[RMDB]
RNA sequence: GGGAACGACUCGAGUAGAGUCGAAAAGAUAUGGAGUAUUGUCAGCGACAGGCUGGCGAUGAAACAGCUCGGAAACGAGCUGUGGAGCCAGUAUUGGUCGCUUGGAUUUAUACUCCUAAGUCAAAACCUUACCUGAUGUUCGCAUCAGGUAAGGUAAUCAUCUCCCUAUCUUCGGAUAGGGAGAUGAAAAAGAAACAACAACAACAAC
Reactivity to 2A3 in 0.01 (KOAc 150mM, MgCl2 10mM, bicine 150mM(pH8.5), 24C), signal-to-noise 2, nucleotides 027 to 156: g040a010u050a010u140g000g000a000g000u010a000u020u010g010u020c010a000g000c000g010a000c000a030g100g000c020u010g000g000c020g000a210u010g000a000a010a000c000a010g000c000u000c020g020g020a080a080a070c000g020a010g000c040u000g010u020g000g000a000g000c020c010a000g000u000a300u130u180g130g010u000c000g010c010u000u030g000g000a000u140u300u000a020u010a000c000u000c000c000u000a090a040g010u010c020a000a010a050a110c000c000u000u000a000c000c000u000g000a010u000g070u080u110c300g020c130a000u000c000a000g000g010u000a000a000g000g000u000a010a000